[RMDB]
RNA sequence: GGGAACGACUCGAGUAGAGUCGAAAAGAUAUGGACUCUCGUAGACAUGCUCAGGGUCGGAAACGACCUGGGAGCAACAGCUACGGAGAGUCCUAAGUCAAAAUCCAUGUCCUUCGGGACAUGGAAAGCUUGUGUAUUGGUUCGCCAAUACACAAGCAAAAGAAACAACAACAACAAC
Reactivity to 2A3 in 0.01 (KOAc 150mM, MgCl2 10mM, bicine 150mM(pH8.5), 24C), signal-to-noise 2, nucleotides 027 to 126: g010a010u010a020u090g000g000a000c000u000c000u010c010g020u000a010g050a090c170a300u220g000c000u000c020a020g000g000g030u000c000g010g010a020a020a000c000g000a000c000c010u110g090g300g060a010g110c010a050a070c170a080g060c000u000a010c020g080g030a100g000a000g010u000c000c000u000a000a000g000u010c020a000a000a050a270u000c000c000a000u010g020u010c000c020u050u090c300g160g000g000a000c000a000u000g000g000a010a050a050
Reactivity to DMS in 0.01 (KOAc 150mM, MgCl2 10mM, bicine 150mM(pH8.5), 24C), signal-to-noise 3, nucleotides 027 to 126: g000a020u000a110u010g010g000a000c000u000c000u000c000g010u010a000g000a070c120a100u000g000c000u010c000a300g020g000g000u000c010g000g000a030a040a080c000g000a010c000c010u010g000g050g010a020g000c010a040a050c230a130g000c010u000a010c000g000g000a020g020a010g000u000c000c000u000a010a050g000u010c010a180a110a140a160u000c010c010a000u000g020u000c010c000u000u010c300g020g000g000a010c000a000u000g000g010a000a040a110

Chemical mapping of a 177-nucleotide RNA with 2A3 and DMS. Values cover nucleotides 27 to 126. The RNA was probed in 150 mM KOAc, 10 mM MgCl2 and 150 mM bicine (pH 8.5) at 24 C. For DMS the reverse transcriptase was MarathonRT. For DMS, 2,343 sequencing reads were counted.